[RMDB]
Structure probing data (2A3 and DMS) for a 207-nucleotide construct. It was measured as part of the RMDB library M2RFPK. 2A3 adducts were read by reverse transcription with SuperScript II with manganese. The RNA was probed in 150 mM KOAc, 10 mM MgCl2 and 150 mM bicine (pH 8.5) at 24 C.
RNA sequence: GGGAACGACUCGAGUAGAGUCGAAAAAGCAGGAAUACGCUCCUGCAUGGGUAGACGAAUUGACCCCAACUGAAGUUCAAUUCUAACGUUAAAAGGAGUUUUAUAUGACUGGACGUACGCGUCCAGAUGACGAUUUCAUUCUUCGGAAUGAAAUCAAGUUAUACAAGAGGUUCGCCUCUUGUAUAACAAAAGAAACAACAACAACAAC
Reactivity to 2A3 in 0.01 (KOAc 150mM, MgCl2 10mM, bicine 150mM(pH8.5), 24C), signal-to-noise 4, nucleotides 027 to 156: a010g020c020a010g020g040a060a080u170a160c120g030c140u020c000c000u010g020c010a010u030g000g000g040u150a130g010a230c050g000a010a000u000u020g010a000c010c000c000c030a080a030c150u300g030a030a020g000u090u010c000a010a000u000u000c020u070a160a050c110g080u100u180a040a050a040a050g130g040a100g000u070u030u080u060a190u040a070u170g140a080c020u010g000g000a000c010g030u040a020c260g000c010g100u000c000c000a000g000a010u040g040a010c070g000a000u010u010u000c000a000u000u010c000u010u010c070g090g000a000a000u000g000a000a010a000u000c000a000a000
Reactivity to DMS in 0.01 (KOAc 150mM, MgCl2 10mM, bicine 150mM(pH8.5), 24C), signal-to-noise 2, nucleotides 027 to 156: a130g030c020a000g000g010a120a090u010a110c160g010c110u000c020c020u000g010c000a190u000g010g020g000u000a130g020a140c120g020a080a030u010u000g000a080c040c020c000c030a110a190c190u050g010a070a050g000u020u000c010a030a090u010u010c010u000a090a140c110g010u000u000a130a090a100a100g010g010a280g020u000u020u000u000a100u000a100u030g040a170c000u010g000g040a010c000g040u000a130c270g030c030g040u000c010c000a000g000a040u010g000a110c140g010a050u000u000u000c000a030u000u000c000u000u000c300g050g000a050a010u000g000a000a020a010u000c010a040a060